[RMDB]
RNA sequence: GGGAACGACUCGAGUAGAGUCGAAAAAUGUGGAUCUUCUACGACAUCGAUGACUCUGAUUUCCUGAACAUCGUCUGCGCUAAUUAGAAGUUUGACGAUAUACCUGCCUAGAAAUCCGGCACCACCAGCUAAUGCGAGUAUUCGUACUCGCAUUAGCAAAAGAAACAACAACAACAAC
Reactivity to DMS in 0.01 (KOAc 150mM, MgCl2 10mM, bicine 150mM(pH8.5), 24C), signal-to-noise 2, nucleotides 027 to 126: a100u010g030u010g010g010a040u000c070u000u000c050u010a140c150g020a070c090a040u000c070g000a110u010g020a060c030u000c030u000g030a060u000u000u000c030c020u000g000a120a130c130a030u000c090g030u000c030u000g000c150g040c030u030a110a070u010u000a050g000a170a070g030u020u000u010g010a040c070g010a040u000a070u000a040c080c080u000g000c030c080u000a070g000a080a010a060u000c060c050g000g020c080a070c040c020a060c150c100a090
Reactivity to 2A3 in 0.01 (KOAc 150mM, MgCl2 10mM, bicine 150mM(pH8.5), 24C), signal-to-noise 2, nucleotides 027 to 126: a000u090g030u050g020g020a030u040c050u080u010c010u150a050c030g110a000c040a070u040c040g070a040u020g030a020c010u000c030u030g030a090u020u080u040c000c000u030g030a040a050c030a100u060c010g030u000c010u010g030c050g020c040u010a050a260u170u090a140g070a230a020g040u040u130u130g040a010c000g000a000u000a010u010a090c030c020u040g030c030c010u050a060g060a050a060a020u010c010c000g040g010c010a030c010c020a020c050c010a000
The data come from the RNA Mapping Database (RMDB), library OK2TST. An RNA of 177 nucleotides, treated with DMS and 2A3 and read out base by base.